[RMDB]
RNA sequence: GGGAACGACUCGAGUAGAGUCGAAAACUUCGUCCAGCACGUCGUUCAUCGCCAGCGCGAAAGCGUCGUGAUAGGUCAGGCCGCUUUCCUGGGCGAUCUUCUGUGCCGUCUCCAGCAGUGGGUACCAACCCUGGAUGAUCUUCGGAUCAUCCAGGGUAAAAGAAACAACAACAACAAC
Reactivity to 2A3 in 0.01 (KOAc 150mM, MgCl2 10mM, bicine 150mM(pH8.5), 24C), signal-to-noise 1, nucleotides 027 to 126: c020u070u080c020g020u000c000c020a040g000c000a000c010g030u040c000g020u190u130c060a080u000c020g040c040c070a060g120c040g030c030g070a010a000a000g020c000g010u000c010g070u020g040a050u220a070g150g090u000c040a030g050g030c030c000g000c000u000u000u030c020c010u050g110g000g000c020g010a020u010c030u070u060c030u080g050u060g010c000c010g080u030c020u000c010c000a010g000c010a000g030u050g050g040g020u040a030c050c010a030
Reactivity to DMS in 0.01 (KOAc 150mM, MgCl2 10mM, bicine 150mM(pH8.5), 24C), signal-to-noise 1, nucleotides 027 to 126: c050u000u010c070g030u030c000c030a100g020c070a030c020g000u000c030g010u000u000c110a070u000c020g010c000c020a190g040c260g010c110g000a030a050a020g010c000g000u000c020g000u000g000a120u000a080g030g040u030c030a080g000g010c050c030g000c040u000u020u000c010c020u020g000g030g000c010g000a040u000c000u000u000c070u020g010u000g000c000c070g000u010c020u040c010c010a150g050c060a020g040u000g000g010g010u000a100c090c040a070